[RMDB]
RNA sequence: GGGAACGACUCGAGUAGAGUCGAAAAAGGGCUGGAUUCGUCCAGCCCUGCACAUACGUACGCAACGAAGCGUACGUCAUUACGCAAAUGACGUAAAGCGUAGAACCACGGACUUCGGUCCGUGGAACGCGUGCAAGACUUUCGAGUCUUGCACGCGAAAAGAAACAACAACAACAAC
Reactivity to DMS in 0.01 (KOAc 150mM, MgCl2 10mM, bicine 150mM(pH8.5), 24C), signal-to-noise 1, nucleotides 027 to 126: a000g000g000g040c000u000g000g010a050u000u000c110g020u000c000c000a000g010c000c000c000u000g010c080a040c130a160u010a050c000g010u000a010c010g000c010a010a130c300g000a150a120g000c000g020u000a000c000g010u000c130a010u000u010a040c110g050c000a050a040a040u010g000a030c060g000u000a040a070a130g010c030g000u000a030g000a120a280c000c000a010c010g010g020a030c010u000u000c090g020g010u000c000c000g060u000g000g010a000a020
Reactivity to 2A3 in 0.01 (KOAc 150mM, MgCl2 10mM, bicine 150mM(pH8.5), 24C), signal-to-noise 1, nucleotides 027 to 126: a000g000g020g000c020u020g000g000a010u040u020c110g050u000c060c000a010g010c000c000c020u040g030c000a020c020a020u100a000c000g000u030a000c010g000c030a140a070c120g180a200a040g030c010g000u000a010c000g000u000c000a030u030u080a010c050g020c060a040a050a230u100g070a030c050g000u040a010a010a130g000c010g020u030a000g070a070a020c000c000a000c000g000g000a010c010u050u060c200g100g010u040c000c010g000u000g000g000a010a010